[RMDB]
RNA sequence: GGGAACGACUCGAGUAGAGUCGAAAAUCGGAGGGAGAAUCAUUCUCAGCUUAGGCCACUUGCUUGAGUACAAGCCUAACCAAGUUGAUUUAUUCAAUACUCGAGCAACAAAGACACAGUUCGAAGCCCGUCAUGUAUCAUUCGUGAUACAUGACGGAAAAGAAACAACAACAACAAC
Reactivity to 2A3 in 0.01 (KOAc 150mM, MgCl2 10mM, bicine 150mM(pH8.5), 24C), signal-to-noise 8, nucleotides 027 to 126: u090c040g020g050a040g040g070g010a060g040a040a060u100c030a090u220u010c040u000c030a030g020c030u040u050a030g000g040c020c020a090c080u030u060g030c030u050u050g020a020g030u050a070c050a180a000g020c000c020u060a040a050c050c020a070a030g040u040u060g090a090u040u080u170a150u090u100c010a020a030u010a050c010u010c010g010a000g010c010a020a060c030a030a170a020g090a030c040a020c040a170g050u070u080c030g050a040a020g040c000
Reactivity to DMS in 0.01 (KOAc 150mM, MgCl2 10mM, bicine 150mM(pH8.5), 24C), signal-to-noise 3, nucleotides 027 to 126: u000c090g000g030a080g020g040g000a080g020a040a090u040c130a050u010u040c020u000c000a070g030c110u020u000a080g000g040c030c100a050c260u030u000g000c050u020u010g000a060g000u000a060c110a040a090g000c000c010u020a110a200c040c090a090a040g020u000u000g000a040u000u000u000a040u070u000c030a070a150u020a010c010u000c000g010a010g020c010a080a080c170a050a060a090g050a060c110a060c160a130g030u000u000c030g010a020a180g020c140

The record gives the reactivity of an RNA of 177 nucleotides to 2A3 and DMS. Values are in units of 0.01, from 0 to 300, in steps of 10. For 2A3, 8,038 sequencing reads were counted. It was measured as part of the RMDB library OK1LIB. For 2A3 the reverse transcriptase was SuperScript II with manganese. The reactions ran in a buffer of 150 mM KOAc, 10 mM MgCl2 and 150 mM bicine (pH 8.5), at 24 C. For DMS the reverse transcriptase was MarathonRT.